The record gives the reactivity of an RNA of 177 nucleotides to DMS and 2A3. For 2A3 the reverse transcriptase was SuperScript II with manganese. Reactivities are rounded to 0.1 and cut off at 0 and 3.
[RMDB]
RNA sequence: GGGAACGACUCGAGUAGAGUCGAAAACGCUACCGGAUGGCGGGUAACUUAGGAAGCGUUUCUUGAGCUUCCCUGGGAUGAGCGUUUGGGAGAGCUGAUUCUGCAGCCCAGAGAGUAGUCUCAGGGCUCAAGGGAGCGGUUUCGACCGCUCCCUUGAAAAAGAAACAACAACAACAAC
Reactivity to DMS in 0.01 (KOAc 150mM, MgCl2 10mM, bicine 150mM(pH8.5), 24C), signal-to-noise 2, nucleotides 027 to 126: c050g030c040u000a080c090c050g030g000a150u060g000g020c050g000g110g000u020a080a200c180u000u000a080g000g000a050a020g050c110g020u010u020u040c080u030u000g000a140g010c080u020u000c010c000c040u030g000g030g000a060u000g000a080g030c100g020u030u010u000g000g010g010a100g000a080g050c040u000g050a160u000u000c110u010g000c110a100g000c000c000c000a030g000a020g000a060g020u000a160g000u000c000u020c010a020g000g000g000c010
Reactivity to 2A3 in 0.01 (KOAc 150mM, MgCl2 10mM, bicine 150mM(pH8.5), 24C), signal-to-noise 2, nucleotides 027 to 126: c030g020c030u080a020c000c010g040g060a120u100g030g060c050g000g010g000u090a040a090c030u070u160a080g020g020a040a030g070c020g030u000u100u030c080u060u120g050a010g000c000u050u030c020c000c000u020g000g020g020a040u030g020a020g050c040g020u000u090u050g040g020g040a230g020a030g020c040u120g030a300u220u090c040u150g080c000a010g000c010c000c020a010g000a000g000a000g010u160a060g030u000c000u010c020a000g020g010g000c050
Reactivities are given for positions 27 through 126. DMS (dimethyl sulfate) methylates the pairing face of unpaired adenines and cytosines. Conditions: 150 mM KOAc, 10 mM MgCl2 and 150 mM bicine (pH 8.5), 24 C.